[RMDB]
RNA sequence: GGGAACGACUCGAGUAGAGUCGAAAAGCAGCGCAUGAACCCUUCCUGCACCGGGUCGAGCUGGCCGUCGGGCCCAGCCAAGCCCUCUACCGUGCGGAUGCUGUGCCCGGAGGCCAUCACGGCGAGCACCAGACCGUAUAUUCGUAUACGGUCUGGUAAAAGAAACAACAACAACAAC
Reactivity to 2A3 in 0.01 (KOAc 150mM, MgCl2 10mM, bicine 150mM(pH8.5), 24C), signal-to-noise 7, nucleotides 027 to 126: g020c030a000g010c020g010c040a030u100g060a060a080c010c000c010u030u030c010c010u040g010c020a050c020c030g100g000g050u040c020g010a030g020c030u020g010g000c000c000g130u040c000g000g000g000c010c060c000a000g000c010c020a050a020g020c010c070c000u040c060u120a220c090c120g050u110g020c050g000g010a030u140g000c000u000g000u000g000c000c000c000g000g010a010g000g000c000c000a010u020c000a000c020g010g010c020g040a050g020c030
Reactivity to DMS in 0.01 (KOAc 150mM, MgCl2 10mM, bicine 150mM(pH8.5), 24C), signal-to-noise 4, nucleotides 027 to 126: g010c010a030g020c000g040c000a030u010g000a080a060c040c030c030u000u020c010c020u000g010c070a100c040c080g030g000g000u010c030g000a070g010c100u010g010g010c000c020g000u000c040g010g000g020c030c030c000a010g000c020c170a240a180g000c010c000c040u020c130u010a080c240c210g000u020g010c070g000g000a150u030g000c010u000g000u010g000c010c000c000g010g000a070g000g010c020c000a040u010c030a090c040g000g010c020g000a130g010c140